Conditions: 150 mM KOAc, 10 mM MgCl2 and 150 mM bicine (pH 8.5), 24 C. An RNA of 207 nucleotides, treated with DMS and 2A3 and read out base by base.
RNA sequence: GGGAACGACUCGAGUAGAGUCGAAAAUUGGCAUUUCGAUGCCAAAGAACGCGUACUACCAAUGACCUGCACUCCGAGGGAAAUCCCAAAUAGGAUUUCCCGAUGAGGAGUGAACUACAGGCAUUGGUAUCGCAUUAAACGCCGGUUCGCCGGCGAAGUAUGCCAGUAUAUUCGUAUACUGGCAUACAAAAGAAACAACAACAACAAC
Reactivity to DMS in 0.01 (KOAc 150mM, MgCl2 10mM, bicine 150mM(pH8.5), 24C), signal-to-noise 2, nucleotides 027 to 156: u000u010g000g000c000a010u000u010u000c220g050a060u000g000c000c000a000a010a150g020a080a040c060g030c030g020u000a130c160u000a010c000c000a040a040u000g020a220c010c000u000g000c010a070c000u000c010c020g000a260g040g020g000a020a010a000u000c000c000c030a050a120a180u010a040g020g020a030u000u000u000c010c000c000g010a020u010g000a190g000g000a060g000u000g000a010a100c020u000a300c000a020g000g000c020a020u000u000g000g000u000a000u000c000g060c030a130u000u010a010a110a140c020g040c010c000g020g020u000u010c250g050c030c000g030g030c000g010a020a100
Reactivity to 2A3 in 0.01 (KOAc 150mM, MgCl2 10mM, bicine 150mM(pH8.5), 24C), signal-to-noise 3, nucleotides 027 to 156: u010u000g000g000c010a000u100u110u030c210g080a030u010g030c000c000a020a020a010g020a040a040c110g020c020g050u070a130c020u000a010c050c030a010a010u030g240a300c010c010u000g000c010a000c000u000c000c010g040a050g000g010g000a000a000a000u030c020c010c030a110a230a060u220a100g000g000a000u000u000u000c000c020c000g040a180u060g090a070g000g000a000g000u000g000a020a000c010u130a050c030a010g000g010c000a000u000u000g000g000u000a000u000c000g000c000a000u020u200a130a120a000c040g020c000c050g010g030u050u070c140g020c130c000g030g000c010g000a030a010